[RMDB]
RNA sequence: GGGAACGACUCGAGUAGAGUCGAAAAGAUAUGGACGUACCUAUGGUAGAGCUCGAGGAUCUUGCGUAACAUCUAAUCGGAAACGAUUAGUGGCAAGGGAGAGCGAUCCAUAGGUACGUCCUAAGUCCAGCAUUAUGAUCUUCGGAUCAUAAUGCUGAAAAGAAACAACAACAACAAC
Reactivity to DMS in 0.01 (KOAc 150mM, MgCl2 10mM, bicine 150mM(pH8.5), 24C), signal-to-noise 3, nucleotides 027 to 126: g020a140u000a300u010g000g040a050c000g020u010a000c000c020u010a030u000g000g020u010a060g000a300g010c010u000c000g020a100g020g000a010u000c000u000u000g000c000g010u000a060a120c220a040u020c000u000a000a000u010c000g000g000a180a090a250c010g000a000u000u000a000g020u000g020g010c000a000a010g000g010g020a050g010a040g000c010g000a140u000c000c010a000u000a030g000g010u000a020c020g000u000c000c000u010a000a050g000u010c020